[RMDB]
RNA sequence: GGGAACGACUCGAGUAGAGUCGAAAAGAUAUGGAGAUCACAAGUUUCGAGGAUCUAUGGCUGAGUAGUAUGGUCGGAAACGACCAUACGAAACGCCAUAGGGAGAAACUAAGUGAUCUCCUAAGUCAAAACUGGAUGCUAUUCGUAGCAUCCAGAAACAUUAAAGAUACUUCGGUAUCUUUAAUGUAAAAGAAACAACAACAACAAC
Reactivity to 2A3 in 0.01 (KOAc 150mM, MgCl2 10mM, bicine 150mM(pH8.5), 24C), signal-to-noise 5, nucleotides 027 to 156: g010a000u020a010u060g000g000a000g000a000u000c000a000c020a080a070g010u000u010u000c070g030a250g000g010a000u000c000u000a000u000g000g000c000u000g000a000g010u000a000g000u000a000u000g000g010u000c000g000g020a030a030a010c010g000a000c010c000a010u000a000c000g000a010a000a000c000g010c010c000a000u000a000g000g010g000a010g000a000a010a000c010u030a270a050g000u000g000a000u000c000u000c000c000u000a000a000g000u000c010a000a010a100a150c000u000g000g000a000u000g000c000u010a050u090u140c280g140u080a010g000c000a000u000c000c000a000g000a000a010
Reactivity to DMS in 0.01 (KOAc 150mM, MgCl2 10mM, bicine 150mM(pH8.5), 24C), signal-to-noise 2, nucleotides 027 to 156: g010a080u000a110u010g000g010a040g010a010u000c000a000c010a200a110g020u000u010u000c010g010a130g020g000a000u000c000u000a010u000g000g040c000u000g000a160g020u000a230g000u010a000u000g020g010u000c000g030g000a080a090a200c000g020a040c000c000a000u000a000c000g000a100a120a280c300g000c000c000a000u000a010g020g000g000a040g000a040a020a030c000u000a020a070g010u000g000a020u000c000u010c000c000u000a010a050g020u010c040a060a090a120a190c010u000g000g000a020u000g010c000u010a060u000u000c300g030u000a030g000c000a010u000c000c000a000g010a030a070
Conditions: 150 mM KOAc, 10 mM MgCl2 and 150 mM bicine (pH 8.5), 24 C.
Structure probing data (2A3 and DMS) for a 207-nucleotide construct.
For 2A3 the reverse transcriptase was SuperScript II with manganese.
DMS adducts were read by reverse transcription with MarathonRT.